[RMDB]
RNA sequence: GGGAACGACUCGAGUAGAGUCGAAAAAAAUCGCAUAGCAAAGAGUCAAAAAAAUAGAGAGCUUUGCGAGACCUACCAAGGGUGAAGAGAUACCAUCCAAGGAGCUGAAGAGAAAUCUCACUUAAGAAACGGAAGCGGUGCUUCGGCACCGCUUCAAGCAUUCCUUUAAGUUCGCUUAAAGGAAUGCAAAAGAAACAACAACAACAAC
Reactivity to 2A3 in 0.01 (KOAc 150mM, MgCl2 10mM, bicine 150mM(pH8.5), 24C), signal-to-noise 1, nucleotides 027 to 156: a000a010a080u030c010g000c010a000u020a010g000c030a060a190a030g020a110g060u170c090a300a190a050a120a120a000a000u300a020g070a010g000a010g020c000u010u020u010g000c020g000a000g020a010c010c000u020a040c020c010a050a080g040g000g030u020g030a060a040g010a000g020a040u040a060c010c000a020u070c010c000a090a030g070g010a010g090c100u130g130a130a040g020a030g030a070a100a080u080c040u000c000a040c020u030u030a030a070g050a200a190a030c050g040g000a000a000g000c000g010g010u030g100c050u030u090c250g050g000c000a030c000c030g000c000u000u000c000a000a000
About this RNA:
Source: RMDB library M2RFPK, as collected in RNAgym. The record gives the reactivity of an RNA of 207 nucleotides to 2A3. As a SHAPE reagent, 2A3 marks flexible, mostly unpaired nucleotides at the ribose 2'-OH. Conditions: 150 mM KOAc, 10 mM MgCl2 and 150 mM bicine (pH 8.5), 24 C. Values cover nucleotides 27 to 156.